Chemical mapping of a 177-nucleotide RNA with DMS and 2A3. The data come from the RNA Mapping Database (RMDB), library OK1LIB.

[RMDB]
RNA sequence: GGGAACGACUCGAGUAGAGUCGAAAAGAAAGAAAACUAGUACUCGAAUAGCGUGCUAGAAGCUGUUCGUAAAAGAAAAACGUAUUGUCGUGAUACCAGUACGAAGUAUUACGUAAAGAAAAGAAAAGGGAUAUCCAUAGUUCGCUAUGGAUAUCCCAAAAGAAACAACAACAACAAC
Reactivity to DMS in 0.01 (KOAc 150mM, MgCl2 10mM, bicine 150mM(pH8.5), 24C), signal-to-noise 1, nucleotides 027 to 126: g000a040a020a160g000a060a030a120a070c000u000a110g000u000a000c000u000c000g000a090a060u060a110g010c070g030u000g020c130u000a000g010a040a180g030c010u100g020u000u020c080g050u020a050a030a050a100g000a060a140a130a020a060c020g000u000a100u000u000g020u000c070g000u000g000a030u030a090c080c020a080g000u000a120c200g000a010a060g060u000a000u070u020a000c000g000u000a150a100a020g020a080a050a120a000g000a050a130a040a030
Reactivity to 2A3 in 0.01 (KOAc 150mM, MgCl2 10mM, bicine 150mM(pH8.5), 24C), signal-to-noise 1, nucleotides 027 to 126: g060a030a090a010g100a010a140a000a020c100u040a000g000u000a000c000u000c000g090a270a300u110a220g010c000g020u000g020c060u060a000g000a000a060g030c020u000g080u120u000c030g010u010a020a020a020a020g060a050a000a010a000a000c000g020u100a090u000u000g100u020c000g050u000g040a050u110a210c000c190a000g090u030a010c120g020a180a020g000u090a000u020u000a000c000g000u000a000a000a050g060a090a020a000a000g060a000a000a000a000
For 2A3, 1,096 sequencing reads were counted.
The reactions ran in a buffer of 150 mM KOAc, 10 mM MgCl2 and 150 mM bicine (pH 8.5), at 24 C.
For DMS, 1,346 sequencing reads were counted.
2A3 adducts were read by reverse transcription with SuperScript II with manganese.